[RMDB]
The record gives the reactivity of an RNA of 207 nucleotides to 2A3. Reactivities are given for positions 27 through 156.
RNA sequence: GGGAACGACUCGAGUAGAGUCGAAAAUACCGCAGGCCUGCGGUGCGGCAGUGUGGAGACCUGCCGUAAGCCGUGAUGUUUUGACAACCGGGAGAAAGCGUAUGCGGAGGCAGCGCUUUCAGGGUCUAAAAGUAUGGGAUCUUCGGAUCCCAUACAAUCUUAAAAGUCACUUCGGUGACUUUUAAGAAAAAGAAACAACAACAACAAC
Reactivity to 2A3 in 0.01 (KOAc 150mM, MgCl2 10mM, bicine 150mM(pH8.5), 24C), signal-to-noise 2, nucleotides 027 to 156: u090a000c000c010g010c000a000g000g020c000c030u020g000c000g000g000u010g000c000g010g000c000a000g010u040g020u140g300g070a070g030a080c000c000u010g000c000c000g000u010a000a000g000c000c000g030u030g010a050u060g060u030u210u150u300g080a040c030a090a120c010c000g000g000g020a000g000a000a000a000g000c020g000u040a300u140g000c030g010g080a040g300g010c000a010g000c000g000c010u000u000u000c000a000g010g010g000u010c000u040a100a100a000a030g000u000a000u000g000g000g000a000u000c000u000u010c040g110g000a000u000c000c000c000a000u000a000c000a010a000
Conditions: 150 mM KOAc, 10 mM MgCl2 and 150 mM bicine (pH 8.5), 24 C.
For 2A3, 1,453 sequencing reads were counted.